[RMDB]
RNA sequence: GGGAACGACUCGAGUAGAGUCGAAAAGAUAUGGAUCCAUAUGGCUUUUGACGCGUUGUCGGAAACGACAGAGCGAUAAGCCAUGUGGAUCCUAAGUCGCAAACAUCUCGCCUUCGGGCGAGAUGAAGCCGUAAAAGUACUUCGGUACUUUUACGGCAAAAGAAACAACAACAACAAC
Reactivity to DMS in 0.01 (KOAc 150mM, MgCl2 10mM, bicine 150mM(pH8.5), 24C), signal-to-noise 2, nucleotides 027 to 126: g000a010u010a300u010g010g010a000u000c000c000a000u000a030u000g000g020c010u000u000u010u010g010a160c040g010c000g020u010u000g000u000c000g000g000a090a050a140c010g010a020c000a010g020a120g000c000g000a110u000a020a030g020c000c000a000u000g000u000g000g000a000u000c000c000u000a020a020g000u000c020g010c180a120a080a300c000a010u000c000u000c000g020c000c000u000u020c260g020g000g040c010g000a000g000a000u000g000a050a080
Reactivity to 2A3 in 0.01 (KOAc 150mM, MgCl2 10mM, bicine 150mM(pH8.5), 24C), signal-to-noise 2, nucleotides 027 to 126: g000a010u020a010u090g020g010a010u010c010c010a000u010a010u030g060g000c030u130u170u210u300g110a050c010g000c040g190u090u000g020u010c010g000g020a030a000a010c000g000a000c020a000g030a000g020c000g040a050u060a280a040g000c000c010a000u010g000u000g020g000a000u020c000c000u000a000a000g010u000c010g050c100a060a130a060c000a000u000c000u000c010g010c000c000u070u170c300g160g000g000c000g030a000g000a000u000g000a030a010